[RMDB]
RNA sequence: GGGAACGACUCGAGUAGAGUCGAAAAGAUAUGGAUGCGUCGUAAACAUGAGGAUGAACUACUCCAGAUCCUCGGAAACGAGGAUUAGGAGCAUCUACCCACCAUGUUUACGACGCAUCCUAAGUCAGCUUGAUGUUAUCUUCGGAUAACAUCAAGCAAAAGAAACAACAACAACAAC
Reactivity to DMS in 0.01 (KOAc 150mM, MgCl2 10mM, bicine 150mM(pH8.5), 24C), signal-to-noise 2, nucleotides 027 to 126: g000a100u000a300u060g000g000a020u010g000c010g030u010c000g060u010a000a000a000c000a000u000g000a130g030g030a020u000g030a110a100c230u000a300c000u000c000c000a300g000a050u000c000c060u000c010g000g010a090a030a130c030g000a040g010g000a000u000u000a130g010g000a050g020c060a020u000c000u000a230c110c040c080a300c080c000a000u000g000u000u000u000a000c000g000a000c010g010c000a000u010c000c000u010a000a080g030u000c030a120

An RNA of 177 nucleotides, treated with DMS and read out base by base. The DMS profile rests on 821 reads. It was measured as part of the RMDB library TTRINS.